[RMDB]
Description: An RNA of 177 nucleotides, treated with 2A3 and DMS and read out base by base. DMS adducts were read by reverse transcription with MarathonRT. For 2A3, 762 sequencing reads were counted. Reactivities are given for positions 27 through 126. The RNA was probed in 150 mM KOAc, 10 mM MgCl2 and 150 mM bicine (pH 8.5) at 24 C. The data come from the RNA Mapping Database (RMDB), library 15KREP. For DMS, 699 sequencing reads were counted.
RNA sequence: GGGAACGACUCGAGUAGAGUCGAAAAGAGGGGCCCGACUGCCAAGUUUGGAGAGCACCUCGGGCCGAAGGGUUGAGUAGCACUCAAAGGGAGGAAUCCACUCGGAGUAGAACAGAGAAAUCACCUCGAGUUAUACAUCGUUCGCGAUGUAUAACUCAAAAGAAACAACAACAACAAC
Reactivity to 2A3 in 0.01 (KOAc 150mM, MgCl2 10mM, bicine 150mM(pH8.5), 24C), signal-to-noise 1, nucleotides 027 to 126: g020a000g000g020g020g000c000c010c000g040a000c010u020g040c000c070a080a170g040u100u180u270g220g030a100g030a000g010c010a000c020c020u000c000g000g000g000c000c000g000a050a010g010g000g000u060u020g000a000g000u000a020g050c070a030c140u000c020a000a000a000g020g010g030a150g020g020a070a040u080c030c000a040c050u040c060g050g020a080g010u140a070g050a170a060c050a000g050a020g030a050a150a050u080c040a110c020c040u110c050
Reactivity to DMS in 0.01 (KOAc 150mM, MgCl2 10mM, bicine 150mM(pH8.5), 24C), signal-to-noise 1, nucleotides 027 to 126: g010a080g050g010g000g000c000c000c000g000a030c300u000g020c020c030a050a300g000u000u030u010g010g030a090g030a210g000c050a050c140c060u010c000g000g000g000c050c080g010a030a020g000g000g030u000u000g010a050g020u000a100g020c150a300c010u000c030a020a040a090g000g010g000a150g000g000a190a070u000c080c040a040c120u000c080g030g000a060g010u000a060g000a010a060c070a090g040a080g020a050a020a070u000c060a070c080c020u020c070